[RMDB]
RNA sequence: GGGAACGACUCGAGUAGAGUCGAAAAGAUGUUACGUUGCGUUUGCUACUCGCUGGGGAGGAGGACGAGCGUGGCUUUCGUCGCCGCUGGCUUGCGCACGGGAUGAAUCGAACGCUGGUGAAGCGCAGCGUGAUGACUCUCCCGUAUGGGUCUACCCCGGGAAUUCAUCUUUCGAGAUGAAUUCCCGAAAAGAAACAACAACAACAAC
Reactivity to 2A3 in 0.01 (KOAc 150mM, MgCl2 10mM, bicine 150mM(pH8.5), 24C), signal-to-noise 1, nucleotides 027 to 156: g110a030u210g020u120u040a000c030g030u010u060g020c020g010u000u060u040g000c000u050a040c010u000c140g010c070u140g040g040g010g070a060g100g010a020g010g060a030c050g020a010g010c030g000u020g000g060c000u010u140u070c100g060u050c050g100c050c010g000c060u060g050g020c040u030u110g000c080g020c020a030c000g010g010g000a040u240g030a060a020u010c050g010a010a030c010g000c000u010g060g030u170g100a100a010g090c060g030c070a000g000c000g000u010g000a040u110g000a000c000u000c000u000c000c030c000g020u020a120u140g020g010g000u030c000u030a070c000c000c000